[RMDB]
Structure probing data (2A3) for a 207-nucleotide construct. Conditions: 150 mM KOAc, 10 mM MgCl2 and 150 mM bicine (pH 8.5), 24 C. 2A3 is a SHAPE reagent: it acylates the 2'-hydroxyl of flexible nucleotides of all four kinds. Reactivities are given for positions 27 through 156.
RNA sequence: GGGAACGACUCGAGUAGAGUCGAAAAGGGGUCCUCUUGGAUUUAAUGGAGUAACAAGGCUGAUGACCUAUACUGAAGCCUCCACGGUAUAGCAAGGCCCGCCCUCCAUUUGUCAGAGGACGGAGGCACCCAAAACGGGAAUCUUCGGAUUCCCGAACAGAUCAUACACCUUCGGGUGUAUGAUCUGAAAAGAAACAACAACAACAAC
Reactivity to 2A3 in 0.01 (KOAc 150mM, MgCl2 10mM, bicine 150mM(pH8.5), 24C), signal-to-noise 2, nucleotides 027 to 156: g020g060g030g000u020c120c010u030c040u060u060g260g010a050u090u270u300a120a060u090g010g010a070g030u150a290a050c140a280a100g010g000c030u050g010a300u010g010a130c000c000u000a000u000a010c000u000g000a080a010g020c000c000u000c000c020a020c000g020g000u000a000u000a000g030c060a160a300g000g010c020c010c040g000c000c000c010u000c000c010a070u200u170u240g010u010c000a000g010a010g000g000a000c020g000g010a010g000g000c000a030c000c000c000a030a060a000a020c020g000g000g000a000a010u000c000u010u020c170g090g000a030u020u020c010c000c000g020a000a020